[RMDB]
RNA sequence: GGGAACGACUCGAGUAGAGUCGAAAAUGCACGACAGACCUCGGAAAUCUCAACAAGCAAAGUAUGGAUUGAUAGACGGCCCGAUUUCUGUAACUUUACCCAGAAAUAUGGGCGUCUUCCGUGCUGCCUUAAAACUCUUUUUCGAAAGAGUUUUAAGAAAAGAAACAACAACAACAAC
Reactivity to DMS in 0.01 (KOAc 150mM, MgCl2 10mM, bicine 150mM(pH8.5), 24C), signal-to-noise 8, nucleotides 027 to 126: u020g000c060a050c040g000a100c070a080g000a110c090c030u010c050g020g010a060a070a070u010c030u010c050a090a090c170a080a140g010c150a080a080a050g020u000a040u010g000g010a080u020u010g010a100u030a030g000a030c020g010g020c010c000c000g000a010u000u000u000c010u000g000u020a080a100c250u030u030u040a120c210c150c000a010g000a010a010a010u000a040u020g010g000g000c000g000u000c010u000u000c030c000g010u000g010c000u000g000c090
Reactivity to 2A3 in 0.01 (KOAc 150mM, MgCl2 10mM, bicine 150mM(pH8.5), 24C), signal-to-noise 9, nucleotides 027 to 126: u080g010c000a010c030g050a010c020a040g080a050c010c010u030c030g040g050a060a080a070u040c070u030c030a040a140c030a070a050g080c040a160a160a020g010u020a050u050g020g030a030u030u150g090a050u110a080g010a000c030g300g100c010c000c000g000a000u000u000u000c010u000g050u090a090a090c030u140u170u180a080c040c030c000a000g090a010a000a000u230a220u140g000g000g000c000g000u000c000u000u010c000c000g000u010g010c020u020g010c000

Chemical mapping of a 177-nucleotide RNA with DMS and 2A3.
DMS adducts were read by reverse transcription with MarathonRT.
For 2A3 the reverse transcriptase was SuperScript II with manganese.